The record gives the reactivity of an RNA of 177 nucleotides to DMS and 2A3.
RNA sequence: GGGAACGACUCGAGUAGAGUCGAAAAUAGUGUUCCUCAUGGCGAGCAGAUGGAACCGGGAGACAUGGAGUCCCUGGCCAGUGUGAGUCCUAGCAUUGCAGGAGGGGAGACCCUGGAGGAGAGAGCCCUACAGUAUUCACUUCGGUGAAUACUGUAGAAAAGAAACAACAACAACAAC
Reactivity to DMS in 0.01 (KOAc 150mM, MgCl2 10mM, bicine 150mM(pH8.5), 24C), signal-to-noise 4, nucleotides 027 to 126: u010a110g010u010g010u000u000c020c010u010c090a120u000g010g020c050g000a160g020c060a070g000a090u010g010g020a090a090c030c030g000g010g000a120g010a040c050a110u010g020g010a250g010u000c020c020c000u010g010g010c040c030a060g010u010g010u000g010a170g000u000c010c050u010a120g010c060a070u000u010g010c080a100g000g000a120g000g000g010g010a090g000a120c070c050c040u000g000g000a080g000g000a090g010a110g000a110g000c070c060
Reactivity to 2A3 in 0.01 (KOAc 150mM, MgCl2 10mM, bicine 150mM(pH8.5), 24C), signal-to-noise 2, nucleotides 027 to 126: u190a030g100u070g050u070u010c010c000u020c010a080u110g040g000c030g020a030g010c030a010g060a230u050g010g030a090a150c030c000g020g030g000a240g030a030c080a090u220g140g060a100g070u040c010c000c020u000g020g030c000c010a020g000u010g000u010g040a020g030u010c020c010u030a030g030c020a090u010u220g000c040a000g000g080a020g000g020g010g010a070g010a020c010c010c020u020g030g010a040g000g030a040g000a000g010a010g040c010c010
Background: Conditions: 150 mM KOAc, 10 mM MgCl2 and 150 mM bicine (pH 8.5), 24 C. For DMS the reverse transcriptase was MarathonRT. The DMS profile rests on 2,994 reads.